[RMDB]
RNA sequence: GGGAACGACUCGAGUAGAGUCGAAAAACUGGGAACAUAUGAGAAAGCAUGAGCUCUAUCCAUCUAUCCAUCCCCUCCCAUUCGCUAGAAUGUUGCAGGUGGAGAUUUCGCUCUUAUGUUUUCUCGAUCAUAUUUCAAUGUUCGCAUUGAAAUAUGAAAAAGAAACAACAACAACAAC
Reactivity to DMS in 0.01 (KOAc 150mM, MgCl2 10mM, bicine 150mM(pH8.5), 24C), signal-to-noise 7, nucleotides 027 to 126: a120c060u010g010g010g010a090a050c110a110u010a080u010g010a020g000a020a010a010g010c010a020u000g000a020g010c020u010c170u010a140u010c010c010a000u000c020u000a110u010c180c110a160u020c030c000c000c000u000c010c010c000a020u000u000c010g000c280u010a080g000a020a020u000g000u010u010g030c190a040g010g010u000g000g000a020g000a170u000u010u010c170g010c020u000c000u010u010a030u000g010u000u000u000u000c000u000c000g010a160
Reactivity to 2A3 in 0.01 (KOAc 150mM, MgCl2 10mM, bicine 150mM(pH8.5), 24C), signal-to-noise 4, nucleotides 027 to 126: a000c060u070g010g010g030a060a040c030a060u170a130u300g010a000g000a000a010a010g000c000a010u030g010a000g010c010u000c020u070a070u000c010c010a010u000c010u050a100u080c060c070a220u110c030c010c000c010u020c010c040c000a010u010u010c010g010c040u040a080g000a040a010u020g050u100u160g150c080a020g010g020u010g030g000a040g000a020u080u130u120c050g000c000u000c000u060u090a030u000g000u010u010u000u000c000u010c000g010a010
Annotation:
An RNA of 177 nucleotides, treated with DMS and 2A3 and read out base by base. The RNA was probed in 150 mM KOAc, 10 mM MgCl2 and 150 mM bicine (pH 8.5) at 24 C. The 2A3 profile rests on 4,851 reads. Source: RMDB library RFMREP, as collected in RNAgym.